[RMDB]
RNA sequence: GGGAACGACUCGAGUAGAGUCGAAAAACUGACGGUACGCCGUCAGAACGGUAGAAAAGAUGGUUUGAAAACCACGCCAUCUACCAAUAUAGUAAAUAAAUAGGCGGAGCGGUCAUACGUGACCGCAAAAACAUAUUCAGCUUCGGCUGAAUAUGAAGAAUCCGAUGAUGUUCGCAUCAUCGGAUUCAAAAGAAACAACAACAACAAC
Reactivity to 2A3 in 0.01 (KOAc 150mM, MgCl2 10mM, bicine 150mM(pH8.5), 24C), signal-to-noise 1, nucleotides 027 to 156: a000c000u000g000a010c000g020g040u080a020c240g100c030c000g010u020c000a000g000a080a040c030g000g000u000a000g020a020a070a000a000g160a300u030g080g000u020u070u180g160a220a160a000a010c000c000a010c020g000c000c000a000u000c000u000a000c030c010a030a000u140a030u060a050g080u050a010a020a190u090a000a190a090u140a040g000g000c010g000g070a000g010c010g000g000u000c000a000u000a180c140g160u090g000a000c000c010g000c010a000a000a000a000a000c030a030u060a030u000u010c000a000g000c010u030u020c100g110g000c000u030g000a000a000u030a030u000g000a000a000